[RMDB]
Structure probing data (2A3 and DMS) for a 170-nucleotide construct. For DMS, 19,772 sequencing reads were counted. The data come from the RNA Mapping Database (RMDB), library 15KLIB.

RNA sequence: GGGAACGACUCGAGUAGAGUCGAAAAUCUCCUUGUCGGUGAACCCGCUCUUGUGAGGCCUCUUCAUAGGUCCGGAGUCGACCUCCAUCUGAUCUGUUCGGGCCCUCUUCGCCGGGGGAGCUCCCUCAUACACCGUUCUUCGGAACGGUGAAAAGAAACAACAACAACAAC
Reactivity to 2A3 in 0.01 (KOAc 150mM, MgCl2 10mM, bicine 150mM(pH8.5), 24C), signal-to-noise 9, nucleotides 027 to 129: u030c000u010c000c000u030u050g100u090c010g000g000u020g030a060a060c010c020c040g080c050u090c040u110u190g040u060g050a120g010g020c010c010u070c060u220u060c070a150u140a180g000g030u020c020c030g030g010a010g030u080c080g070a170c020c010u010c010c000a080u060c090u130g050a060u020c010u040g090u070u060c040g010g000g020c000c040c010u030c030u050u040c010g000c000c000g000g000g000g000g000a010g000c020u030c000c000c000u020c010a100u140a050
Reactivity to DMS in 0.01 (KOAc 150mM, MgCl2 10mM, bicine 150mM(pH8.5), 24C), signal-to-noise 6, nucleotides 027 to 129: u040c010u020c000c030u030u000g040u040c050g000g000u000g030a070a170c040c030c020g060c080u080c050u000u100g040u000g030a120g030g020c050c010u040c100u070u050c100a140u000a140g020g030u030c020c130g010g020a020g020u000c070g040a160c130c010u030c010c020a100u050c100u080g020a000u000c060u020g020u040u040c210g040g000g000c090c030c030u030c070u040u020c040g020c000c000g020g000g000g010g000a040g000c170u030c020c030c000u020c070a100u090a030